The record gives the reactivity of an RNA of 177 nucleotides to DMS and 2A3. For 2A3, 2,686 sequencing reads were counted. For 2A3 the reverse transcriptase was SuperScript II with manganese. The RNA was probed in 150 mM KOAc, 10 mM MgCl2 and 150 mM bicine (pH 8.5) at 24 C.
RNA sequence: GGGAACGACUCGAGUAGAGUCGAAAAAUGAAUGCUGGUGGGCUGAGAUACCGUGUCUUCACAGUCCAGCCAUGGGCAUGAGGCUUUUGGCAGAGAAACAGCUUGACCCUCUGCAUAGGUCAUGGGAAUUCAAACCGUUUUUCGAAACGGUUUGAAUAAAAGAAACAACAACAACAAC
Reactivity to DMS in 0.01 (KOAc 150mM, MgCl2 10mM, bicine 150mM(pH8.5), 24C), signal-to-noise 5, nucleotides 027 to 126: a100u010g010a120a050u000g020c010u010g010g020u000g010g020g020c000u000g010a090g010a070u010a060c110c160g000u000g020u000c140u010u010c040a120c040a060g000u000c010c010a040g000c020c030a070u000g020g000g020c010a070u010g000a130g010g010c040u000u000u000u000g030g010c010a050g000a050g000a110a050a070c070a080g010c120u010u010g010a120c110c040c010u000c020u000g000c060a060u000a030g000g010u000c020a070u000g000g010g000a110
Reactivity to 2A3 in 0.01 (KOAc 150mM, MgCl2 10mM, bicine 150mM(pH8.5), 24C), signal-to-noise 3, nucleotides 027 to 126: a000u110g050a020a010u060g020c020u070g000g070u040g010g070g020c010u000g020a030g030a150u060a080c070c140g090u080g070u070c120u140u150c070a020c000a050g020u020c000c010a020g000c030c010a060u070g000g110g000c010a010u100g070a060g060g040c010u040u080u100u190g110g000c010a000g000a010g060a050a050a020c040a020g080c160u070u050g060a060c020c000c010u010c010u020g020c010a030u050a030g000g000u030c040a050u090g100g000g100a050